[RMDB]
RNA sequence: GGGAACGACUCGAGUAGAGUCGAAAAGGGUCUCAAUUAUCUUAACAUGAGCAGGUUAUUUGUGAGAAAUAUCGGUGACCCGGUCACCUCCUCUAUAGCCGACCUGAAGAGGAUGAUAGAUGCUGGGGCAGCAUGAAAGGUUCGCCUUUCAUGCUGCAAAAGAAACAACAACAACAAC
Reactivity to 2A3 in 0.01 (KOAc 150mM, MgCl2 10mM, bicine 150mM(pH8.5), 24C), signal-to-noise 1, nucleotides 027 to 126: g040g010g030u030c030u030c050a040a090u210u120a050u110c020u060u070a030a010c030a070u080g010a030g100c070a030g030g030u050u050a090u120u250u260g090u050g030a040g030a050a200a020u220a040u110c070g060g020u030g060a030c000c120c000g000g030u020c010a040c020c000u000c020c010u040c030u000a080u010a030g030c070c000g080a090c000c000u000g040a110a020g030a020g130g020a000u030g000a020u120a050g050a040u030g100c090u150g020g000g000
Reactivity to DMS in 0.01 (KOAc 150mM, MgCl2 10mM, bicine 150mM(pH8.5), 24C), signal-to-noise 1, nucleotides 027 to 126: g010g020g010u000c010u000c030a000a050u010u000a110u000c040u000u000a080a080c080a090u010g000a090g010c120a190g010g030u000u000a040u000u010u000g030u000g000a010g000a070a100a050u000a030u000c080g020g040u010g010a060c040c050c080g010g010u000c120a070c040c020u010c050c020u000c000u010a040u000a080g040c090c080g000a210c100c020u000g020a100a140g000a040g010g000a050u010g010a100u000a060g000a070u000g000c040u010g000g000g000